The record gives the reactivity of an RNA of 207 nucleotides to DMS and 2A3. The 2A3 profile rests on 4,732 reads.

[RMDB]
RNA sequence: GGGAACGACUCGAGUAGAGUCGAAAAGGAUUGCGCAGUCCGGCAACAUCAGCAGAGAGCCCGCUAUACGUGACGGAUUGGCUGAAGCGUACAGAAAUAUUGAGCCUCCUGCAAGAGGCAGCCAAGCAAAACGUACGUGAGUUCGCUCACGUACGAACCCCGUUUAUAUGUUCGCAUAUAAACGGGGAAAAGAAACAACAACAACAAC
Reactivity to DMS in 0.01 (KOAc 150mM, MgCl2 10mM, bicine 150mM(pH8.5), 24C), signal-to-noise 2, nucleotides 027 to 156: g030g050a050u010u010g030c070g040c060a190g010u000c030c020g000g030c010a050a070c010a090u000c020a170g000c040a050g000a140g000a130g030c030c000c030g050c050u000a100u010a030c050g030u010g000a220c010g000g010a230u000u020g000g040c010u010g010a030a300g010c030g000u000a080c020a050g040a100a080a090u030a180u010u000g010a130g050c000c000u000c000c000u000g040c100a050a130g010a090g010g050c000a040g040c020c030a000a000g050c100a030a020a090a130c000g010u000a030c010g020u000g000a030g000u000u000c300g020c020u000c010a020c000g000u000a010c030g000a020a020
Reactivity to 2A3 in 0.01 (KOAc 150mM, MgCl2 10mM, bicine 150mM(pH8.5), 24C), signal-to-noise 5, nucleotides 027 to 156: g030g010a080u040u120g030c050g000c040a030g090u010c020c020g020g030c020a040a050c020a110u090c040a010g030c050a010g090a000g010a030g140c040c040c020g020c030u070a090u020a110c080g030u050g030a030c030g040g010a060u050u040g030g010c020u030g010a050a000g010c010g010u020a040c050a020g160a080a160a040u250a070u140u160g040a040g000c000c000u030c010c020u090g050c040a060a010g000a010g050g000c000a010g000c000c000a030a020g010c030a040a090a020a020c010g000u000a000c000g000u000g000a000g000u050u060c130g020c110u000c000a000c000g000u000a000c000g000a000a000
DMS adducts were read by reverse transcription with MarathonRT.
Reactivities are rounded to 0.1 and cut off at 0 and 3.
DMS (dimethyl sulfate) methylates the pairing face of unpaired adenines and cytosines.
The reactions ran in a buffer of 150 mM KOAc, 10 mM MgCl2 and 150 mM bicine (pH 8.5), at 24 C.